[RMDB]
RNA sequence: GGGAACGACUCGAGUAGAGUCGAAAAAUCAGAAGAGGCAAGCUCGACUUGCAAAGGAGAAGGAUGAGUUUCUUAACUCACCUCCUAGUGUAAUUAGUAAGAUAACUAUAGCUGGAGGACCAGCUCCGGAACUCGGGGAAUUCGUUCCCCGAGUUCCAAAAGAAACAACAACAACAAC
Reactivity to 2A3 in 0.01 (KOAc 150mM, MgCl2 10mM, bicine 150mM(pH8.5), 24C), signal-to-noise 1, nucleotides 027 to 126: a000u170c070a070g000a060a050g070a110g000g060c000a020a020g000c000u070c300g270a300c070u000u020g000c000a000a040a140g040g000a090g000a030a030g070g020a060u070g000a000g000u000u000u130c150u000u080a000a000c000u000c000a000c050c000u030c000c000u050a060g000u020g000u050a110a150u210u000a040g040u010a040a040g060a210u250a050a040c050u000a000u000a060g000c000u000g000g000a000g120g060a010c000c000a000g030c050u060c000c000
The data come from the RNA Mapping Database (RMDB), library OK1LIB. An RNA of 177 nucleotides, treated with 2A3 and read out base by base. Values cover nucleotides 27 to 126. Conditions: 150 mM KOAc, 10 mM MgCl2 and 150 mM bicine (pH 8.5), 24 C.